[RMDB]
RNA sequence: GGGAACGACUCGAGUAGAGUCGAAAAGCCAACGGUGCCGAUGGCACCGGCGCUGCCGGAGGCGACGGCGGGAUCCUGCUUGGCAAUGGGGGCAAUGGCGGCUCGGGUGCGGCGGGCCAGGUCGGCGCGUACCCUAGGGGUUCGCCCCUAGGGUACGAAAAGAAACAACAACAACAAC
Reactivity to DMS in 0.01 (KOAc 150mM, MgCl2 10mM, bicine 150mM(pH8.5), 24C), signal-to-noise 3, nucleotides 027 to 126: g000c020c010a150a110c080g000g000u000g030c000c000g000a140u020g010g010c020a030c020c020g020g000c070g020c030u000g050c020c000g000g030a120g030g000c000g020a100c140g030g000c040g000g000g010a110u010c030c020u000g000c040u010u000g010g030c080a120a110u020g000g000g000g000g000c040a050a110u050g030g030c040g000g000c030u010c020g000g000g000u020g030c040g010g040c020g000g000g000c050c040a050g010g000u020c020g010g030c060g000
Reactivity to 2A3 in 0.01 (KOAc 150mM, MgCl2 10mM, bicine 150mM(pH8.5), 24C), signal-to-noise 6, nucleotides 027 to 126: g060c000c000a030a030c040g070g060u080g010c010c020g170a180u200g050g000c040a040c030c000g000g000c060g010c030u140g030c010c010g100g030a040g020g080c050g010a040c020g050g020c000g010g000g010a060u080c010c010u040g040c050u080u100g070g000c030a110a190u140g010g000g000g010g030c030a060a130u090g060g020c040g010g030c050u040c040g060g000g000u060g030c020g020g000c000g010g020g000c000c000a010g030g060u050c010g020g020c020g000